[RMDB]
RNA sequence: GGGAACGACUCGAGUAGAGUCGAAAAGAAAGAAAGAAGAAUCACCAGGAGGCAAGGAUCCUCUACUACGUUAUUCGGGCACCUUGAGUUGAGAGGAGCUAGUGGUGCGCCCGGCCUGGAGAUCAAAACACGACAGGCGGGUUCGCCCGCCUGUCAAUCGUUAAGUUAUGUUCGCAUAACUUAACGAAAAAGAAACAACAACAACAAC
Reactivity to 2A3 in 0.01 (KOAc 150mM, MgCl2 10mM, bicine 150mM(pH8.5), 24C), signal-to-noise 3, nucleotides 027 to 156: g040a010a070a010g060a050a120a020g100a030a010g010a050a030u020c010a020c030c010a000g010g010a030g050g000c060a050a100g070g020a050u030c010c000u050c000u010a070c020u050a030c070g120u130u050a080u080u090c010g000g030g000c000a020c010c010u110u220g130a040g050u030u020g050a020g000a000g020g010a010g010c000u040a050g170u030g100g010u020g010c080g060c020c000c010g020g000c000c000u010g000g000a040g000a010u040c030a000a060a020a030c090a020c080g010a010c000a000g000g020c000g000g010g000u010u010c040g040c000c000c010g020c000c000u000g000u000c000a000a000
Reactivity to DMS in 0.01 (KOAc 150mM, MgCl2 10mM, bicine 150mM(pH8.5), 24C), signal-to-noise 2, nucleotides 027 to 156: g020a110a070a110g000a080a100a150g010a140a110g010a130a080u000c040a100c020c060a140g020g010a080g050g000c050a070a070g000g000a100u050c020c020u000c020u000a070c040u000a050c060g020u000u000a160u000u000c050g010g010g030c030a150c030c030u000u010g000a070g010u000u010g010a200g010a090g000g000a020g000c020u000a070g030u000g000g000u020g010c000g010c000c000c030g000g000c040c020u010g020g000a110g010a090u000c050a070a050a090a100c110a090c040g000a020c010a020g010g030c010g010g010g020u010u000c230g010c020c000c000g010c020c000u020g010u010c000a010a030
Chemical mapping of a 207-nucleotide RNA with 2A3 and DMS. It was measured as part of the RMDB library M2RFPK. For 2A3 the reverse transcriptase was SuperScript II with manganese. DMS adducts were read by reverse transcription with MarathonRT.